Conditions: 150 mM KOAc, 10 mM MgCl2 and 150 mM bicine (pH 8.5), 24 C. The record gives the reactivity of an RNA of 177 nucleotides to DMS. High DMS reactivity at an A or C suggests that its Watson-Crick edge is free. Source: RMDB library TTRINS, as collected in RNAgym. For DMS the reverse transcriptase was MarathonRT.

RNA sequence: GGGAACGACUCGAGUAGAGUCGAAAAGAUAUGGAUUCUACCCACCGCUUCCCAAGCGACGAAGCAGUGUAAAAGUCGGAAACGACUUUUACACUGCAGAGCUUGAACAGCGAGGAAUCCUAAGUCAGGGUAUAUAGAGGUUCGCCUCUAUAUACCCAAAAGAAACAACAACAACAAC
Reactivity to DMS in 0.01 (KOAc 150mM, MgCl2 10mM, bicine 150mM(pH8.5), 24C), signal-to-noise 1, nucleotides 027 to 126: g020a040u000a190u020g010g000a010u000u000c020u010a140c020c010c010a300c120c000g000c030u000u010c240c290c020a010a000g020c000g040a210c200g020a140a180g000c010a000g000u040g010u000a010a000a010a030g000u020c000g000g000a120a080a250c000g000a060c000u000u000u020u000a000c000a000c000u000g000c000a000g010a130g020c010u000u010g000a060a090c290a050g010c000g000a110g000g000a020a000u000c000c020u010a060a140g010u030c110a170